[RMDB]
Chemical mapping of a 207-nucleotide RNA with 2A3. 2A3 adducts were read by reverse transcription with SuperScript II with manganese.
RNA sequence: GGGAACGACUCGAGUAGAGUCGAAAAGUGUGCUAUACUAGUAAGGUUGAAUGAAUCAACCCUUGGUGCUUAGCUUCUUUCACCAAGCAUAUUACACGCGGAUAACCACCAAAGGAGAAAAGAUGAACUGCCCGACGAUUCUUCGGAAUCGUCGGAAGAUGCCCUUUCACUUCGGUGAAAGGGCAUCAAAAGAAACAACAACAACAAC
Reactivity to 2A3 in 0.01 (KOAc 150mM, MgCl2 10mM, bicine 150mM(pH8.5), 24C), signal-to-noise 1, nucleotides 027 to 156: g020u000g020u010g010c120u120a070u020a300c130u100a150g220u140a170a040g000g020u000u010g060a160a220u190g150a050a170u020c000a000a000c000c000c000u000u020g020g000u020g020c020u030u090a030g060c000u050u080c010u000u030u020c020a020c010c000a000a000g000c020a060u070a040u190u160a000c010a000c070g030c000g070g000a010u010a060a100c000c000a000c020c000a040a000a050g060g000a090g050a030a170a020a100g130a020u210g000a100a080c120u070g060c000c000c000g000a000c000g000a000u000u020c000u000u120c180g000g030a000a000u000c000g000u000c000g000g000a000a000
Overview: High 2A3 reactivity points to a flexible backbone, as in loops and unpaired stretches. It was measured as part of the RMDB library M2RFPK. Values cover nucleotides 27 to 156. The RNA was probed in 150 mM KOAc, 10 mM MgCl2 and 150 mM bicine (pH 8.5) at 24 C.